The record gives the reactivity of an RNA of 177 nucleotides to DMS and 2A3.
As a SHAPE reagent, 2A3 marks flexible, mostly unpaired nucleotides at the ribose 2'-OH.
Reactivities are given for positions 27 through 126.
[RMDB]
RNA sequence: GGGAACGACUCGAGUAGAGUCGAAAAGCCGGUACCCCCGGUGAGCCCGGCGGUGGUUUGGGAAAACCCGUUGCCGCCGUUGCCAUACAACAACCCACCGGCGCCACCGUUGGGAUUGGCCGCGGUCCGGUGUAUCUUGGUUCGCCAAGAUACACCGAAAAGAAACAACAACAACAAC
Reactivity to DMS in 0.01 (KOAc 150mM, MgCl2 10mM, bicine 150mM(pH8.5), 24C), signal-to-noise 2, nucleotides 027 to 126: g010c000c010g000g030u010a300c100c060c050c130c030g030g010u000g000a080g000c050c080c000g000g020c050g000g030u030g010g000u000u000u000g030g010g000a170a110a170a120c000c000c080g020u010u010g040c000c010g030c030c300g000u000u010g020c030c030a170u020a060c190a050a110c090a050a070c070c030c030a140c300c010g010g000c070g010c070c050a010c020c000g000u000u020g020g000g000a090u000u010g010g020c000c000g020c130g020g000u010c060
Reactivity to 2A3 in 0.01 (KOAc 150mM, MgCl2 10mM, bicine 150mM(pH8.5), 24C), signal-to-noise 1, nucleotides 027 to 126: g040c020c000g000g060u240a210c020c000c120c000c020g090g000u040g020a010g070c010c020c030g010g000c030g010g010u070g000g060u210u140u300g030g010g010a160a140a180a270c070c010c010g100u110u130g010c000c000g000c000c000g020u010u010g000c030c000a200u200a250c040a160a000c010a000a030c040c030c030a010c010c040g010g000c080g000c040c010a030c000c000g000u100u070g030g060g000a100u040u090g090g000c000c010g000c040g010g010u030c020

Source: RMDB library OK2TRN, as collected in RNAgym. The DMS profile rests on 965 reads.